Structure probing data (2A3) for a 207-nucleotide construct. The data come from the RNA Mapping Database (RMDB), library VIROID. Reactivities are given for positions 27 through 156. 2A3 adducts were read by reverse transcription with SuperScript II with manganese. The 2A3 profile rests on 602 reads. The RNA was probed in 150 mM KOAc, 10 mM MgCl2 and 150 mM bicine (pH 8.5) at 24 C.
RNA sequence: GGGAACGACUCGAGUAGAGUCGAAAACGUCCUGGAAGGGGAAAGAGGACGAGCGGAAUAAAGGGGGCGGGCCUCCCGAUCCGAGGGGCCCAACCACCAAGUUUGGAGAGCACUCCGGCCCGAAAGGAUGAGAAGUCCCCAGAGGGAGGAAUCCACAGUAUUCUUAGCAGUUCGCUGCUAAGAAUACAAAAGAAACAACAACAACAAC
Reactivity to 2A3 in 0.01 (KOAc 150mM, MgCl2 10mM, bicine 150mM(pH8.5), 24C), signal-to-noise 1, nucleotides 027 to 156: c030g000u010c010c020u040g030g120a240a250g110g000g000g060a050a050a160g020a030g020g020a020c020g050a060g070c050g050g110a040a070u210a120a120a140g020g010g000g000g050c070g000g000g020c000c000u030c020c010c020g030a060u100c040c050g010a080g000g010g000g010c000c000c000a040a010c000c000a060c010c000a080a020g020u030u060u060g070g030a130g000a000g070c060a010c050u050c030c050g130g070c000c000c000g040a050a020a000g020g000a010u060g010a050g000a050a010g050u030c000c000c000c000a010g060a060g050g010g020a040g000g010a020a040u090c040c010a030c020a010